[RMDB]
RNA sequence: GGGAACGACUCGAGUAGAGUCGAAAAUUAGUCUUCUAGUGUUUGAAUGUGGAUGGAAUUAAAGCUGGGUUUGUAGUGAGCCAUUAGGAUUAUGGCAAAUGUCUAGUGUACAGAAUUCAGUGUAGGCUCUAUAUCUCCGGUUCGCCGGAGAUAUAGAAAAAGAAACAACAACAACAAC
Reactivity to 2A3 in 0.01 (KOAc 150mM, MgCl2 10mM, bicine 150mM(pH8.5), 24C), signal-to-noise 2, nucleotides 027 to 126: u000u000a030g080u010c000u090u020c060u060a050g030u000g020u050u040u050g140a140a100u100g000u070g050g090a100u100g050g080a010a030u080u070a210a100a000g020c010u000g000g000g000u020u090u040g030u090a020g030u020g050a000g000c000c020a010u030u020a100g180g140a070u260u130a050u110g000g080c000a070a040a000u070g030u000c000u010a070g050u070g030u100a070c040a000g100a060a000u040u060c000a010g010u000g020u100a030g020g000c010
Reactivity to DMS in 0.01 (KOAc 150mM, MgCl2 10mM, bicine 150mM(pH8.5), 24C), signal-to-noise 4, nucleotides 027 to 126: u010u010a070g010u010c030u000u000c030u000a070g020u010g000u000u010u010g020a070a060u020g010u010g010g010a070u000g010g000a070a050u010u010a050a080a170g020c020u010g010g020g000u000u000u010g010u010a050g010u020g000a200g010c030c010a030u000u000a090g020g010a110u010u000a020u010g000g010c020a040a050a050u010g000u000c040u000a050g030u020g010u010a050c070a070g000a050a070u000u010c060a070g000u010g020u010a090g010g020c090